[RMDB]
RNA sequence: GGGAACGACUCGAGUAGAGUCGAAAAGCUAGCUAGCAUAUUACGGCCGAUCGGCAUGCAUGCAUAUGCUAAUAUUAGCUAGCCGUAAUAUGCUAUAAUCGCGAUCGUAAUCGGCUAAUGCUAUACGAGUUAUAUGGGCUUUCGAGCCCAUAUAACUAAAAGAAACAACAACAACAAC
Reactivity to 2A3 in 0.01 (KOAc 150mM, MgCl2 10mM, bicine 150mM(pH8.5), 24C), signal-to-noise 2, nucleotides 027 to 126: g080c040u040a010g040c000u000a000g000c010a000u000a000u000u010a010c000g000g030c060c030g050a090u100c030g110g000c010a010u110g030c040a070u110g000c030a060u060a010u300g000c040u030a060a070u170a160u240u080a030g010c030u020a020g000c010c010g010u000a000a000u000a000u000g000c000u020a010u000a060a000u100c050g010c070g050a010u020c030g000u030a030a040u050c030g000g040c040u060a100a000u100g000c040u060a060u040a210c020g030
Reactivity to DMS in 0.01 (KOAc 150mM, MgCl2 10mM, bicine 150mM(pH8.5), 24C), signal-to-noise 3, nucleotides 027 to 126: g000c060u000a040g020c110u000a020g000c020a000u000a010u000u000a020c010g010g010c000c070g000a050u010c100g020g020c140a070u000g020c080a070u000g020c270a070u000a010u000g000c010u010a080a110u010a090u010u000a060g010c070u000a100g010c010c010g000u000a010a020u000a020u000g000c010u000a010u000a040a070u010c180g000c100g010a040u000c040g000u000a030a080u010c040g000g000c000u010a030a080u000g010c070u010a070u000a100c110g000